[RMDB]
RNA sequence: GGGAACGACUCGAGUAGAGUCGAAAAGCUCGGGGCUACUUUUAAUUUCUCUCUCUUUUGAUAUCUUCUUUUCUCGAUCUCCUAGCUUGAUCUUUUGAUCUCUCAAAUCGAUCUUAAGAAAAAGAUCUGUAGUUGAUAUAUUCGUAUAUCAACUACAAAAAGAAACAACAACAACAAC
Reactivity to 2A3 in 0.01 (KOAc 150mM, MgCl2 10mM, bicine 150mM(pH8.5), 24C), signal-to-noise 9, nucleotides 027 to 126: g020c020u030c040g010g000g030g010c020u050a040c020u110u110u080u160a100a120u040u190u010c020u000c000u000c000u010c010u040u040u060u070g070a060u060a090u120c020u050u020c000u030u100u050u010c030u010c010g050a080u010c010u010c020c010u020a050g010c000u020u030g010a030u030c000u020u060u030u070g020a020u000c030u010c020u010c040a070a110a100u090c050g000a000u000c000u030u050a100a060g040a080a090a020a010a000g020a020u010c030
Reactivity to DMS in 0.01 (KOAc 150mM, MgCl2 10mM, bicine 150mM(pH8.5), 24C), signal-to-noise 4, nucleotides 027 to 126: g010c040u000c080g010g000g000g010c070u010a070c030u010u030u020u030a060a140u020u000u000c010u000c010u000c030u000c010u000u000u010u010g010a110u010a070u010c040u000u020c030u000u010u010u000c000u000c030g010a100u010c030u010c000c020u010a070g010c050u010u000g010a130u010c010u000u000u000u000g010a040u000c030u010c080u020c130a050a120a080u020c090g010a000u000c000u000u020a040a100g010a050a070a140a040a020g000a020u010c060